[RMDB]
RNA sequence: GGGAACGACUCGAGUAGAGUCGAAAAGGGCUCUGGUCAGCGACCCUAGGUGCUGUGAGCGCUCAGGGGACGUGUCCAGGCCCCACAGGGGUGGUGUAGGGGAUGUCUUCCUCCUUGCCCCAUUUCCAGGAGCGCCUUGCAGCUGGAGGACGCAGGCACGUAAGCGAAAGUUCGCUUUCGCUUACGUAAAAGAAACAACAACAACAAC
Reactivity to 2A3 in 0.01 (KOAc 150mM, MgCl2 10mM, bicine 150mM(pH8.5), 24C), signal-to-noise 2, nucleotides 027 to 156: g040g000g000c040u050c000u230g000g020u090c040a000g070c030g030a080c020c000c000u010a060g000g040u030g040c040u080g130u300g240a100g010c030g020c010u090c090a030g070g020g040g030a110c030g020u040g000u000c000c000a000g020g010c000c000c000c000a050c030a020g020g020g000g000u090g070g040u110g050u180a110g040g030g000g000a030u100g070u120c090u070u030c020c010u000c020c000u020u100g000c000c000c000c000a020u060u060u050c020c000a090g050g140a080g000c070g000c040c060u120u270g000c040a050g020c030u140g050g000a000g010g020a050c000g000c030a050g020g010c090